[RMDB]
Background:
Chemical mapping of a 170-nucleotide RNA with 2A3 and DMS. Source: RMDB library 15KLIB, as collected in RNAgym. For 2A3, 4,283 sequencing reads were counted. The reactions ran in a buffer of 150 mM KOAc, 10 mM MgCl2 and 150 mM bicine (pH 8.5), at 24 C.
RNA sequence: GGGAACGACUCGAGUAGAGUCGAAAAACCUACGGGAAUCCCUGGGUCCCCCUGAUGUCCAGUCCCUCCCCCGUCCGAGAGAAGGGAGACUCCGGAACUCCUGCCAUUUGAGGGACGAAGCCGCCACGAACUUCCCCCUUCGGGGGGAAGAAAAGAAACAACAACAACAAC
Reactivity to 2A3 in 0.01 (KOAc 150mM, MgCl2 10mM, bicine 150mM(pH8.5), 24C), signal-to-noise 3, nucleotides 027 to 129: a040c040c020u040a010c040g000g000g000a120a090u100c000c010c020u040g030g000g030u020c000c020c000c000c010u020g100a120u090g060u040c040c000a000g000u000c010c000c000u000c000c010c010c000c010g010u010c010c010g130a110g000a000g010a060a110g030g020g010a040g000a030c000u020c020c000g020g030a010a010c020u000c010c040u010g090c040c000a060u070u050u050g060a050g010g030g010a020c030g030a020a000g000c000c010g050c030c000a010c040g000a050a000
Reactivity to DMS in 0.01 (KOAc 150mM, MgCl2 10mM, bicine 150mM(pH8.5), 24C), signal-to-noise 5, nucleotides 027 to 129: a030c030c010u000a080c170g020g020g040a110a030u040c020c010c050u050g010g030g010u010c060c010c030c060c020u000g010a130u040g020u020c040c020a100g030u050c040c010c000u000c020c000c040c000c020g000u050c080c070g000a230g020a070g050a040a040g000g000g000a050g010a070c050u000c040c040g050g000a060a160c000u020c040c030u020g010c240c110a080u020u040u020g030a140g030g040g000a110c060g060a030a100g020c000c000g030c050c010a080c120g050a080a190